[RMDB]
RNA sequence: GGGAACGACUCGAGUAGAGUCGAAAAGAAAGAAAGAAAGAAAUCUGACAGAAUGACGGAUUCGAUCGUGGUGGUCGGCGGGCCACCACGUCAUUCCUUCGCACUGUCUCCGGGCAGACCGCCAUAAAAAAGCGGAUCUACUUCGGUAGAUCCGCAAGAAUAGCCCAUAGUUCGCUAUGGGCUAUUCAAAAGAAACAACAACAACAAC
Reactivity to 2A3 in 0.01 (KOAc 150mM, MgCl2 10mM, bicine 150mM(pH8.5), 24C), signal-to-noise 2, nucleotides 027 to 156: g040a030a080a000g060a020a060a020g060a040a120a010g050a070a160a070u080c050u080g020a040c020a040g210a240a240u190g040a030c030g010g030a010u010u120c110g020a070u120c070g000u020g000g000u000g010g020u020c030g040g080c050g010g030g020c000c000a010c000c000a000c000g000u000c000a000u020u050c010c010u040u000c050g000c040a030c020u000g030u020c020u020c030c030g020g020g000c020a010g010a130c000c090g030c000c030a110u300a030a150a030a020a030a010g020c000g000g000a000u000c000u000a010c000u040u020c100g050g000u000a000g000a000u050c010c000g010c010a000a000
Notes
Chemical mapping of a 207-nucleotide RNA with 2A3. The reactions ran in a buffer of 150 mM KOAc, 10 mM MgCl2 and 150 mM bicine (pH 8.5), at 24 C. 2A3 adducts were read by reverse transcription with SuperScript II with manganese.